[RMDB]
RNA sequence: GGGAACGACUCGAGUAGAGUCGAAAAUGAUGAGCUCUCCGAGAUGGAUACCAAGACGGUUUCUUUAAAACUUAAGAAACUAAACGAGUUUGUGAGGCAGAGUCAGGUAUAUUCCAGUAUAAUCGCCCAUCCCUCGUAAAUUCGUUUACGAGGGAUGAAAAGAAACAACAACAACAAC
Reactivity to 2A3 in 0.01 (KOAc 150mM, MgCl2 10mM, bicine 150mM(pH8.5), 24C), signal-to-noise 2, nucleotides 027 to 126: u130g010a030u080g040a010g040c010u010c020u000c020c010g000a030g000a100u070g070g020a020u050a070c000c040a030a030g050a010c070g020g010u000u030u030c000u000u160u110a070a180a050a020c010u040u020a050a010g040a150a110a120c090u100a180a060a010c070g000a030g030u050u090u130g050u070g010a000g000g020c000a000g020a010g120u000c010a010g040g000u020a050u010a020u160u050c000c010a000g000u000a030u050a180a080u070c040g080c020c010
Reactivity to DMS in 0.01 (KOAc 150mM, MgCl2 10mM, bicine 150mM(pH8.5), 24C), signal-to-noise 4, nucleotides 027 to 126: u010g010a090u000g010a300g010c030u000c040u000c010c020g010a080g010a110u000g010g000a070u020a050c050c040a110a090g010a070c140g000g000u000u000u010c000u000u000u000a060a040a050a080c130u000u010a080a070g010a060a050a050c070u000a020a070a110c110g000a070g010u010u000u010g000u010g000a050g020g010c020a020g000a160g000u000c030a050g000g000u010a040u000a110u000u000c030c030a070g000u000a090u010a070a090u000c060g000c090c040